[RMDB]
RNA sequence: GGGAACGACUCGAGUAGAGUCGAAAAUCAUCGUCGAAGCGCAGGGCACGCGCGUGACCGACGCCGAAGGCCGUACCUAUCUCGACGCGAUCGGCGGCAUGUGGUGCGUGACGCUCGGCUACGGCCAGGUAAUCACUAAUUUCGAUUAGUGAUUACCAAAAGAAACAACAACAACAAC
Reactivity to 2A3 in 0.01 (KOAc 150mM, MgCl2 10mM, bicine 150mM(pH8.5), 24C), signal-to-noise 9, nucleotides 027 to 126: u050c020a020u100c040g020u010c010g020a060a010g010c060g010c110a190g030g060g000c040a020c070g070c010g000c010g020u020g110a050c020c020g030a020c020g000c010c010g030a050a040g110g010c050c010g050u090a130c050c030u130a160u170c100u050c100g060a050c040g030c030g120a190u030c010g030g020c000g010g010c050a040u150g060u130g050g030u040g010c020g020u020g020a050c040g000c020u020c000g020g000c010u010a020c020g010g010c010c010a010
Reactivity to DMS in 0.01 (KOAc 150mM, MgCl2 10mM, bicine 150mM(pH8.5), 24C), signal-to-noise 9, nucleotides 027 to 126: u000c070a100u010c140g010u000c020g010a110a110g010c020g020c030a130g010g010g020c040a140c050g010c060g010c020g020u000g010a070c050c090g000a060c050g010c040c020g010a060a120g000g010c060c040g010u000a080c080c080u000a100u010c110u010c060g000a080c070g020c070g010a150u000c030g000g000c010g000g000c040a060u000g010u000g010g010u000g010c020g020u000g000a100c070g010c030u000c020g010g010c030u000a070c040g010g000c010c170a080